This 207-nucleotide RNA was probed chemically with 2A3. Reactivities are given for positions 27 through 156. The RNA was probed in 150 mM KOAc, 10 mM MgCl2 and 150 mM bicine (pH 8.5) at 24 C. It was measured as part of the RMDB library M2RFPK. Reactivities are rounded to 0.1 and cut off at 0 and 3.
RNA sequence: GGGAACGACUCGAGUAGAGUCGAAAAGAAAGAGAGUUAGAUACGGUUGAUCUCACCCUUCGGGGGGGCUAUAGAGAUCACUGGAAGCACUACCGGACAACCGGAACAUUGCAGCAAUGCAGCCCAAAAAAUCCAAACAUCUUCGGAUGUUUGGAAACUACGCUUUGAUGUUCGCAUCAAAGCGUAGAAAAGAAACAACAACAACAAC
Reactivity to 2A3 in 0.01 (KOAc 150mM, MgCl2 10mM, bicine 150mM(pH8.5), 24C), signal-to-noise 1, nucleotides 027 to 156: g050a040a120a000g140a010g020a030g010u090u200a010g010a020u060a070c010g000g030u050u210g000a010u000c000u000c010a040c000c000c040u050u120c260g040g050g010g000g000g000g000c010u120a110u080a150g000a010g000a000u000c000a000c000u010g010g020a010a000g090c040a020c060u060a060c040c020g020g000a070c080a090a240c040c020g010g000a050a040c030a020u190u180g000c000a010g010c000a040a070u050g020c000a010g000c030c000c000a000a110a130a000a040a020u000c000c000a000a000a000c000a000u000c000u070u090c230g150g000a000u000g000u000u010u000g000g000a000a000a000